[RMDB]
RNA sequence: GGGAACGACUCGAGUAGAGUCGAAAAAGCGCGGCUUGAACGAGAGCUCUCGUAAGACUAUGACUGACUUCUUACGAGAGUCUUUCAAGCCGAUCUGAGUGUAAGAGGUAAGAAGUCAGUCAUAGUCUUACCUCUGCUCUCACUCAGAUCGAACGCACAAAAUACCACCAUUCGUGGUGGUAUUUUGAAAAGAAACAACAACAACAAC
Reactivity to 2A3 in 0.01 (KOAc 150mM, MgCl2 10mM, bicine 150mM(pH8.5), 24C), signal-to-noise 1, nucleotides 027 to 156: a020g040c060g000c040g000g010c000u030u030g000a060a030c060g020a000g020a010g040c010u000c010u030c080g000u010a010a000g000a000c010u010a000u010g000a010c000u010g000a000c000u000u000c010u020u000a010c030g030a060g060a000g190u000c000u020u070u030c000a020a010g020c000c000g000a020u030c010u050g060a080g050u170g000u080a090a030g020a060g190g000u010a000a000g010a000a000g010u000c010a000g000u000c000a010u000a000g000u000c000u000u000a000c000c000u000c020u020g000c010u050c010u000c000a000c010u000c000a010g020a090u020c020g020a080a030c020g000c010a030
Reactivity to DMS in 0.01 (KOAc 150mM, MgCl2 10mM, bicine 150mM(pH8.5), 24C), signal-to-noise 1, nucleotides 027 to 156: a080g010c030g020c020g030g000c020u000u000g010a050a100c090g000a080g020a060g020c000u000c000u000c020g020u000a010a030g000a050c050u000a030u000g000a060c030u000g000a030c020u010u010c000u010u010a020c010g000a150g010a110g000u000c010u030u000u000c030a030a130g030c030c060g000a010u000c050u000g000a130g000u010g020u000a090a100g010a050g010g010u000a010a010g010a040a030g000u000c020a030g000u030c010a080u000a040g010u000c000u000u000a000c000c000u000c020u000g000c000u010c050u000c010a040c020u010c010a030g000a040u000c020g010a030a020c000g020c030a180
The record gives the reactivity of an RNA of 207 nucleotides to 2A3 and DMS.
For DMS the reverse transcriptase was MarathonRT.
2A3 adducts were read by reverse transcription with SuperScript II with manganese.
The RNA was probed in 150 mM KOAc, 10 mM MgCl2 and 150 mM bicine (pH 8.5) at 24 C.
Source: RMDB library OK3TST, as collected in RNAgym.